[RMDB]
RNA sequence: GGGAACGACUCGAGUAGAGUCGAAAAAGUGGGGUGUGCCCUGGCAGGACUCGUGGGCAGUGGGGUGUGCCUUGUUCUGGCCACGCCACUUCAGGGGCUCAUUGCCUUUCUAUUCUCCAUGAGGCAGGUUCCUCCCACAAUUCGUUGUGGGAGGAACAAAAGAAACAACAACAACAAC
Reactivity to 2A3 in 0.01 (KOAc 150mM, MgCl2 10mM, bicine 150mM(pH8.5), 24C), signal-to-noise 1, nucleotides 027 to 126: a010g150u100g000g030g000g040u070g040u040g010c010c010c040u060g000g030c040a060g050g030a050c010u040c100g170u090g000g000g110c050a000g010u030g020g000g030g000u090g050u170g030c030c000u030u050g250u220u110c070u020g000g030c000c000a020c050g070c010c000a000c000u010u010c030a000g000g000g020g030c000u100c040a120u050u190g030c000c000u040u070u000c060u110a210u150u030c040u030c010c010a060u100g030a070g050g000c060a010g040
Reactivity to DMS in 0.01 (KOAc 150mM, MgCl2 10mM, bicine 150mM(pH8.5), 24C), signal-to-noise 1, nucleotides 027 to 126: a080g040u000g000g010g020g030u000g020u010g010c140c010c040u000g000g010c070a100g020g000a100c020u000c060g000u010g000g000g020c240a040g040u000g000g030g010g020u000g030u010g060c000c010u000u030g020u010u000c260u000g030g010c000c020a010c030g000c000c000a010c040u000u020c100a070g040g020g000g000c000u010c140a030u000u000g020c000c000u040u000u000c090u010a170u010u010c110u010c020c040a090u000g010a040g000g010c150a050g000

The record gives the reactivity of an RNA of 177 nucleotides to 2A3 and DMS. The RNA was probed in 150 mM KOAc, 10 mM MgCl2 and 150 mM bicine (pH 8.5) at 24 C. The DMS profile rests on 1,626 reads. Reactivities are given for positions 27 through 126. It was measured as part of the RMDB library OK2TRN.